The data come from the RNA Mapping Database (RMDB), library OK1LIB. Structure probing data (2A3 and DMS) for a 177-nucleotide construct. Reactivities are given for positions 27 through 126. 2A3 adducts were read by reverse transcription with SuperScript II with manganese. For DMS, 4,842 sequencing reads were counted.
RNA sequence: GGGAACGACUCGAGUAGAGUCGAAAAACUCGGCGGGGCACCCAGCAGCACGCGAGAGAGCCUGGAGACGCGACCAGCCGAGCGGAGAACGGCGACAGGCUUCCGGCCUCUGGAGCGCAUCUCUCGGUCAGCGGAUAUUAUUCGUAAUAUCCGCUGAAAAAGAAACAACAACAACAAC
Reactivity to 2A3 in 0.01 (KOAc 150mM, MgCl2 10mM, bicine 150mM(pH8.5), 24C), signal-to-noise 4, nucleotides 027 to 126: a000c020u020c000g020g010c010g000g030g000g000c010a020c010c000c010a010g010c010a010g040c000a030c040g110c050g010a040g010a020g010a010g060c000c010u030g020g020a110g020a090c100g030c050g080a110c010c030a010g000c020c010g010a020g010c030g000g040a110g030a160a080c060g050g020c010g080a050c050a070g000g040c000u100u010c040c050g030g000c000c000u000c020u040g030g040a080g040c040g000c040a070u010c000u000c010u020c030g030g030
Reactivity to DMS in 0.01 (KOAc 150mM, MgCl2 10mM, bicine 150mM(pH8.5), 24C), signal-to-noise 3, nucleotides 027 to 126: a130c040u010c050g030g000c030g010g010g000g030c040a120c040c000c020a090g030c060a080g030c060a030c030g000c040g020a080g020a040g000a090g010c010c010u000g010g000a040g000a120c080g000c060g000a140c040c060a140g060c020c030g020a070g010c070g000g020a060g000a150a150c060g020g000c070g000a160c110a080g010g010c040u000u020c080c040g000g000c060c000u010c040u000g000g000a120g000c060g000c050a070u000c010u000c020u010c110g000g010